[RMDB]
RNA sequence: GGGAACGACUCGAGUAGAGUCGAAAAGUGGGGUGUGCCUGUAAUCCCACCUACUCUGGAGACUGAGGCACGAGAAUUGCUUGAACCCAGGAGGUGGAGGUUGCAGUGAGCUGAGAUCACGCCACUGCAUUCCAGAUUGGGUGACAGAGCAAGAUUACAGCCCAUAAAUAUUCGUAUUUAUGGGCUGAAAAGAAACAACAACAACAAC
Reactivity to 2A3 in 0.01 (KOAc 150mM, MgCl2 10mM, bicine 150mM(pH8.5), 24C), signal-to-noise 4, nucleotides 027 to 156: g010u030g000g000g000g010u100g010u040g040c000c000u050g050u090a040a040u030c000c000c000a000c000c010u060a060c010u060c050u080g120g030a080g020a080c080u100g020a040g010g020c010a000c020g240a110g050a070a130u230u010g000c000u020u030g020a010a000c020c020c000a030g000g060a070g100g120u060g000g010a030g040g050u070u020g000c000a000g000u000g010a100g000c020u030g040a030g020a170u220c070a010c190g000c000c000a000c000u000g000c000a030u050u000c000c000a000g030a110u020u110g010g000g020u020g020a040c030a050g040a010g030c000a010a000g050a100u040u170a070
Reactivity to DMS in 0.01 (KOAc 150mM, MgCl2 10mM, bicine 150mM(pH8.5), 24C), signal-to-noise 3, nucleotides 027 to 156: g040u000g010g000g030g010u030g040u010g050c040c020u010g000u010a080a040u000c010c000c000a040c030c040u000a060c060u000c010u010g030g010a120g010a080c010u010g010a080g010g020c030a090c010g000a200g010a090a180u020u000g010c010u010u000g020a170a060c020c010c000a150g020g020a130g010g000u010g010g010a060g000g010u000u000g000c020a030g020u010g000a120g060c000u010g000a240g000a160u000c110a110c050g010c000c000a020c010u000g010c030a040u000u000c020c010a090g010a260u000u000g020g030g020u010g010a230c060a110g000a060g010c000a050a030g000a160u000u000a200